[RMDB]
RNA sequence: GGGAACGACUCGAGUAGAGUCGAAAAACGAAACCCAAGGUGCAUGCCGAGGUGCGGUAGGCCUCGUUAACAAACCGCAAAAAAAUAGUCGCAAACGACGAAAACUACGCACUCGCUGCUUAAUAACAGUAGGGUCCCUACUUCGGUAGGGACCCAAGACAAUUCGUCAGUUCGCUGACGAAUUGUCAAAAGAAACAACAACAACAAC
Reactivity to 2A3 in 0.01 (KOAc 150mM, MgCl2 10mM, bicine 150mM(pH8.5), 24C), signal-to-noise 1, nucleotides 027 to 156: a000c050g020a080a060a020c000c000c000a000a060g100g000u130g010c010a000u150g090c070c010g050a030g000g090u020g000c000g010g160u040a010g000g010c000c020u010c010g110u100u050a050a090c080a110a060a050c050c000g000c000a000a000a000a200a000a000a000u180a030g100u110c020g020c100a070a080a070c020g040a000c080g020a060a000a000a000c000u030a010c000g000c040a020c000u020c000g000c020u030g000c000u030u060a060a060u090a130a060c020a050g060u160a130g020g000g010u000c000c000c000u000a010c020u000u050c240g030g000u000a000g000g010g010a000c000c000c000a000a000
Structure probing data (2A3) for a 207-nucleotide construct. Values cover nucleotides 27 to 156. The 2A3 profile rests on 534 reads. 2A3 is a SHAPE reagent: it acylates the 2'-hydroxyl of flexible nucleotides of all four kinds.